[RMDB]
RNA sequence: GGGAACGACUCGAGUAGAGUCGAAAAACCUUAUUUUGAGAAGCUGAGGGAUUUGGCCCAUAGAAGCUUCAGCAACCGACUUUAAAUAGCACGGUGCUAAUACCAACGAGCAACUCGAAAGAUAAGUAAAACGUUGACAAGUUCGCUUGUCAACGAACGUUACGUAGAAGUUCGCUUCUACGUAACGAAAAGAAACAACAACAACAAC
Reactivity to 2A3 in 0.01 (KOAc 150mM, MgCl2 10mM, bicine 150mM(pH8.5), 24C), signal-to-noise 5, nucleotides 027 to 156: a010c050c000u120u070a250u040u150u080u080g110a050g000a000a010g000c010u030g010a030g030g010g020a050u070u050u050g020g000c000c000c000a030u110a150g020a030a000g000c000u000u010c000a000g000c000a020a040c000c000g040a000c020u120u070u210a110a210a300u180a160g020c020a010c040g000g000u000g000c000u000a010a010u030a070c020c020a030a040c050g050a030g080c060a070a080c050u040c080g110a070a070a060g090a080u130a090a020g050u070a030a120a030a030c010g000u000u000g000a000c000a000a020g000u030u090c120g060c130u000u000g000u000c000a000a000c000g000a040a000
Reactivity to DMS in 0.01 (KOAc 150mM, MgCl2 10mM, bicine 150mM(pH8.5), 24C), signal-to-noise 2, nucleotides 027 to 156: a160c080c010u000u010a060u000u000u010u000g010a290g010a060a150g020c080u000g000a110g030g000g010a090u020u000u000g010g040c010c000c000a140u000a140g000a190a120g000c010u010u000c030a020g020c000a070a020c010c000g040a100c020u000u010u010a050a140a070u000a020g020c020a060c000g020g010u000g010c000u000a040a040u000a030c060c010a080a130c150g040a130g030c010a070a150c060u000c020g000a110a080a080g010a050u000a020a090g000u000a100a070a090a130c020g030u000u000g050a030c000a020a030g000u000u010c300g010c010u020u000g000u000c010a000a010c000g020a010a030
Source: RMDB library M2RFPK, as collected in RNAgym. The record gives the reactivity of an RNA of 207 nucleotides to 2A3 and DMS. For DMS the reverse transcriptase was MarathonRT. The DMS profile rests on 4,132 reads. The 2A3 profile rests on 3,758 reads.